[RMDB]
RNA sequence: GGGAACGACUCGAGUAGAGUCGAAAAGAUAUGGAUUAUAGGGAGAAGCCUAUCGGAAACGAUAGACUUCAUCGAUCUAUACUGUCCUAAGUCAAAACCGUACCAUUUGUUCGCAAAUGGUACGGAAGGAAUGUUUAUCCUUCGGGAUAAACAUUCCAAAAGAAACAACAACAACAAC
Reactivity to 2A3 in 0.01 (KOAc 150mM, MgCl2 10mM, bicine 150mM(pH8.5), 24C), signal-to-noise 2, nucleotides 027 to 126: g020a030u000a010u070g010g000a000u000u040a030u070a060g040g000g010a090g000a030a010g020c000c010u020a010u020c000g020g000a010a010a010c010g000a000u010a000g000a010c010u010u000c020a050u270c020g000a000u000c000u000a020u010a120c210u190g060u000c000c000u000a040a000g030u000c040a010a000a100a240c010c000g000u000a000c000c000a000u000u030u000g090u030u140c300g030c210a000a000a000u000g000g010u000a000c000g000g010a000a010
Reactivity to DMS in 0.01 (KOAc 150mM, MgCl2 10mM, bicine 150mM(pH8.5), 24C), signal-to-noise 3, nucleotides 027 to 126: g000a050u000a060u000g000g000a030u000u000a030u000a020g010g020g000a060g020a020a000g020c020c030u000a010u020c010g020g020a020a010a070c000g000a000u000a000g000a010c000u000u000c000a130u000c120g000a160u020c000u010a030u000a000c300u010g010u000c000c010u000a030a100g000u010c080a060a050a100a250c010c000g000u000a020c000c000a000u000u000u000g000u000u000c180g030c020a020a010a020u000g000g000u000a000c000g000g000a030a020